RNA sequence: GGGAACGACUCGAGUAGAGUCGAAAAGGUAAACUGCCAGAUGACCGACACGACGAUGAUCGGACCGGACGAUGGCAGGAGAAUGCGCCAGAAAAUCUGGAAGAAGCUUGCGCCGUCUAUCUGUGCAUACGAUGACCGUAUUCGUACGGUCAUCGUAAAAAGAAACAACAACAACAAC
Reactivity to 2A3 in 0.01 (KOAc 150mM, MgCl2 10mM, bicine 150mM(pH8.5), 24C), signal-to-noise 1, nucleotides 027 to 126: g070g000u040a160a090a060c010u030g020c000c000a020g060a150u080g020a070c000c010g030a040c030a000c120g140a020c030g280a300u110g020a120u030c020g000g020a000c040c080g000g020a010c020g020a020u050g030g000c010a000g040g000a000g000a000a040u120g000c010g010c030c010a070g120a010a100a010a110u040c020u000g100g010a070a040g000a030a000g030c020u020u030g000c000g010c000c000g030u000c000u060a110u020c000u090g050u060g030c000a040
Reactivity to DMS in 0.01 (KOAc 150mM, MgCl2 10mM, bicine 150mM(pH8.5), 24C), signal-to-noise 2, nucleotides 027 to 126: g000g020u000a040a100a190c040u000g000c030c000a050g020a160u020g020a130c030c010g040a060c200a150c040g020a030c050g050a170u020g020a150u000c010g020g010a090c190c050g050g000a110c040g010a160u000g000g000c000a000g000g000a060g000a090a070u000g060c090g010c010c010a040g000a190a060a120a120u010c000u010g000g020a090a040g010a100a120g010c070u000u000g020c090g010c040c040g000u000c060u000a070u000c010u030g010u010g010c120a120